[RMDB]
RNA sequence: GGGAACGACUCGAGUAGAGUCGAAAAUAAACAAUGUGGACAAUGAAAUUGUUAAGUCUUCAGAUGUUGUAGACAGCAAUGAAAAUUUAACAUGGCCACUUGUUUUAGAAUGCACUAGGGCAUCCACGCGCGUAGCCCUUCGGGGCUACGAAAAGAAACAACAACAACAAC
Reactivity to DMS in 0.01 (KOAc 150mM, MgCl2 10mM, bicine 150mM(pH8.5), 24C), signal-to-noise 3, nucleotides 027 to 129: u020a020a010a020c010a000a000u080g000u010g010g030a080c060a140a000u050g040a120a100a050u000u000g030u000u000a020a010g040u020c000u030u020c000a010g020a160u000g020u000u000g040u000a050g020a140c070a070g020c020a030a070u000g000a000a010a020a020u100u010u000a010a010c000a030u020g000g000c030c000a000c040u000u000g030u010u020u040u000a000g010a040a050u000g020c070a030c120u000a000g000g000g000c010a000u050c030c070a000c120g010c060g000
Reactivity to 2A3 in 0.01 (KOAc 150mM, MgCl2 10mM, bicine 150mM(pH8.5), 24C), signal-to-noise 7, nucleotides 027 to 129: u050a000a000a000c020a040a040u230g020u000g010g020a020c050a090a100u220g110a120a120a120u130u000g010u020u040a040a000g000u000c010u020u030c010a030g060a300u090g050u120u020g020u050a100g070a140c020a010g000c020a000a010u010g060a010a000a020a020u050u040u040a020a010c020a020u010g040g000c000c000a000c000u000u000g030u010u000u000u000a050g020a050a040u090g000c030a010c130u120a050g070g070g000c000a010u000c000c000a050c020g060c010g000
This 170-nucleotide RNA was probed chemically with DMS and 2A3. The DMS profile rests on 18,498 reads. 2A3 is a SHAPE reagent: it acylates the 2'-hydroxyl of flexible nucleotides of all four kinds. For 2A3, 12,945 sequencing reads were counted. Conditions: 150 mM KOAc, 10 mM MgCl2 and 150 mM bicine (pH 8.5), 24 C. Source: RMDB library 15KLIB, as collected in RNAgym.